[RMDB]
RNA sequence: GGGAACGACUCGAGUAGAGUCGAAAACGCUGUCUCUGCUCAUGCGGUAGGCGCUGUGUGUGGUUCUGCGUGAGCACAUAACCCAGCUAGCUGCCAGCGCUACACUGUUGGAGUGCACAAGCACACCCCCACGGUAGCCUUUCGAGGCUACCGUGGGAAAAGAAACAACAACAACAAC
Reactivity to 2A3 in 0.01 (KOAc 150mM, MgCl2 10mM, bicine 150mM(pH8.5), 24C), signal-to-noise 2, nucleotides 027 to 126: c010g050c080u020g020u070c000u000c020u020g050c010u010c040a090u090g020c000g070g050u110a100g060g030c010g000c040u000g090u050g020u060g010u070g070g180u130u040c010u010g010c000g020u060g030a030g030c000a010c000a080u180a090a050c040c050c040a010g020c060u100a010g000c010u000g000c020c000a030g020c040g010c020u050a050c090a070c090u140g070u070u080g000g020a050g010u000g010c000a070c030a240a010g080c000a010c030a010c010c000